[RMDB]
RNA sequence: GGGAACGACUCGAGUAGAGUCGAAAAACCUAAGCUUCGGCUUAGGUAAAAACCGUAGGCGAUAUCUGUUGUCAGGUCGGACUAUUCGAAAGAGUAGCCCGACCUUGGAUUUACAGAGUAUCGCCUAAACGGAAAAACGCUGGUUUCGACCAGCGAAACUAUACGUUUAGUUCGCUAAACGUAUAGUAAAAGAAACAACAACAACAAC
Reactivity to DMS in 0.01 (KOAc 150mM, MgCl2 10mM, bicine 150mM(pH8.5), 24C), signal-to-noise 1, nucleotides 027 to 156: a030c000c000u000a010a020g000c010u000u010c300g080g010c010u000u020a030g010g000u000a000a010a050a090a030c010c000g010u000a070g020g000c000g020a020u010a010u010c000u010g030u000u000g010u000c000a060g010g010u000c000g040g000a020c010u010a020u000u000c000g000a270a120a300g000a000g020u000a010g000c010c010c010g020a000c000c000u000u010g010g020a030u000u000u000a010c020a020g000a080g020u000a010u000c070g000c000c000u000a000a050a030c030g000g010a060a050a070a110a140c010g030c010u000g020g000u000u010u010c260g010a060c010c000a050g030c020g000a000a060
Reactivity to 2A3 in 0.01 (KOAc 150mM, MgCl2 10mM, bicine 150mM(pH8.5), 24C), signal-to-noise 1, nucleotides 027 to 156: a000c010c000u000a010a000g000c000u040u210c300g090g000c000u000u000a000g000g000u010a050a000a000a060a000c030c000g000u000a010g010g000c000g020a000u000a000u010c010u010g010u000u000g000u010c010a000g000g000u010c000g000g000a010c000u000a000u000u010c010g030a080a100a100g010a110g020u000a000g030c000c010c000g000a010c010c010u010u020g010g000a010u120u190u070a010c000a000g030a020g060u050a000u000c000g000c000c000u000a000a000a000c010g020g090a080a000a000a060a060c020g010c000u000g020g020u010u080u170c270g070a050c030c000a010g000c000g000a000a000
This 207-nucleotide RNA was probed chemically with DMS and 2A3. The DMS profile rests on 3,929 reads.